[RMDB]
About this RNA:
The record gives the reactivity of an RNA of 177 nucleotides to 2A3 and DMS.
RNA sequence: GGGAACGACUCGAGUAGAGUCGAAAAGUACACCUGCUGGAAGCGGCGUUCCAGUGCGGCGUCCUUCUCGAUGUGCUUGCGGUACUCGUCGAGCGUGGUGGCACCGACCAACCGGAGCUCGCCGCGGUACCAGCUGCUGAUUCGUCAGCAGCUGGUAAAAAGAAACAACAACAACAAC
Reactivity to 2A3 in 0.01 (KOAc 150mM, MgCl2 10mM, bicine 150mM(pH8.5), 24C), signal-to-noise 5, nucleotides 027 to 126: g030u040a020c010a030c040c030u050g020c040u050g050g030a050a030g020c030g090g000c050g030u140u150c010c040a080g040u050g120c080g030g000c000g000u020c010c000u040u050c030u020c040g060a090u070g080u050g080c030u050u120g050c030g060g000u050a060c010u010c030g090u010c010g020a030g020c040g000u120g010g030u040g010g040c070a110c080c050g080a150c050c060a100a070c020c010g030g040a050g020c050u060c060g020c010c000g000c030g000g020
Reactivity to DMS in 0.01 (KOAc 150mM, MgCl2 10mM, bicine 150mM(pH8.5), 24C), signal-to-noise 3, nucleotides 027 to 126: g010u000a020c050a060c030c000u000g010c090u020g000g020a070a040g010c130g030g000c000g010u000u030c010c050a090g010u060g030c140g000g000c040g000u000c000c010u010u000c040u000c020g020a080u020g000u000g000c040u000u000g000c070g000g010u020a090c060u010c030g020u020c000g010a030g030c040g020u010g040g040u000g000g000c020a160c070c070g000a140c060c060a110a070c060c070g000g050a130g000c030u010c020g000c010c000g000c050g000g020
For DMS, 4,983 sequencing reads were counted. Values cover nucleotides 27 to 126. For 2A3, 3,048 sequencing reads were counted. The reactions ran in a buffer of 150 mM KOAc, 10 mM MgCl2 and 150 mM bicine (pH 8.5), at 24 C.